[RMDB]
Record summary: Structure probing data (2A3 and DMS) for a 177-nucleotide construct. Values cover nucleotides 27 to 126. The 2A3 profile rests on 26,139 reads. The reactions ran in a buffer of 150 mM KOAc, 10 mM MgCl2 and 150 mM bicine (pH 8.5), at 24 C.
RNA sequence: GGGAACGACUCGAGUAGAGUCGAAAAGACGGACUCUUCUUGGAAUGUGAGGAGUCCGAGCCUUCUCACAUUCCAUUUGCCAUGAGGAGGCAGUGGACUUCAUGGCGAAAUGGGAUGAAGUCUACAGGCAGUGGUCUCUAUUCGUAGAGAUCACUGCAAAAGAAACAACAACAACAAC
Reactivity to 2A3 in 0.01 (KOAc 150mM, MgCl2 10mM, bicine 150mM(pH8.5), 24C), signal-to-noise 7, nucleotides 027 to 126: g030a010c010g010g000a000c000u000c010u050u020c020u040u100g120g190a190a050u160g050u040g050a000g000g000a000g000u000c010c000g000a030g020c000c010u040u030c020u010c010a060c000a010u010u000c010c000a010u010u010u030g010c010c010a010u020g010a000g060g020a030g060g040c040a030g100u160g070g040a010c000u000u010c000a010u000g010g000c020g020a030a040a030u050g000g010g000a000u010g020a010a010g040u010c030u060a060c060a040g110
Reactivity to DMS in 0.01 (KOAc 150mM, MgCl2 10mM, bicine 150mM(pH8.5), 24C), signal-to-noise 9, nucleotides 027 to 126: g010a130c030g000g000a070c030u000c000u000u000c010u000u000g020g010a130a100u010g010u000g000a020g000g000a010g000u000c010c030g000a030g000c090c040u000u010c020u000c050a230c030a020u000u000c000c000a030u000u000u000g010c010c000a030u000g000a020g000g000a100g000g010c060a060g010u010g000g010a120c010u000u000c000a010u000g000g010c010g010a000a010a030u000g010g000g000a010u000g000a090a100g010u000c060u010a090c250a140g000
About this RNA: DMS (dimethyl sulfate) methylates the pairing face of unpaired adenines and cytosines.